The record gives the reactivity of an RNA of 177 nucleotides to 2A3 and DMS. The 2A3 profile rests on 508 reads.
RNA sequence: GGGAACGACUCGAGUAGAGUCGAAAAUGAGCUACCCGUGGGCAGGCUGAAGCGGGGGUAAGACCCCGUGGAGGGCCGAACGCACGUCGGUUGAAAACGGCGGCGAUGACCUGCGGGUAGGGGUGAAAAGGGUUCUGAUAUUCGUAUCAGAACCCUUAAAAGAAACAACAACAACAAC
Reactivity to 2A3 in 0.01 (KOAc 150mM, MgCl2 10mM, bicine 150mM(pH8.5), 24C), signal-to-noise 1, nucleotides 027 to 126: u100g000a020g000c000u000a000c000c000c000g020u020g000g000g000c010a000g000g000c000u050g000a000a000g000c010g000g000g000g000g000u010a020a020g190a290c000c000c000c000g000u010g000g030a050g060g190g000c000c000g000a010a000c000g010c080a130c000g000u000c000g030g080u150u160g070a000a090a020a000c000g000g000c000g010g010c000g000a030u140g070a300c000c000u000g010c000g080g010g000u000a000g020g000g000g000u190g000a130a050
Reactivity to DMS in 0.01 (KOAc 150mM, MgCl2 10mM, bicine 150mM(pH8.5), 24C), signal-to-noise 2, nucleotides 027 to 126: u040g000a180g000c000u000a020c080c020c000g050u000g000g010g010c030a300g000g030c040u000g000a300a260g030c040g000g000g010g000g000u060a170a270g000a190c000c030c000c000g020u000g000g000a240g030g000g030c030c000g000a140a300c030g020c010a160c000g040u000c030g000g000u020u000g000a120a090a100a100c010g000g000c000g000g020c020g000a210u030g000a120c000c030u040g000c030g010g000g000u000a000g000g000g030g000u000g010a020a090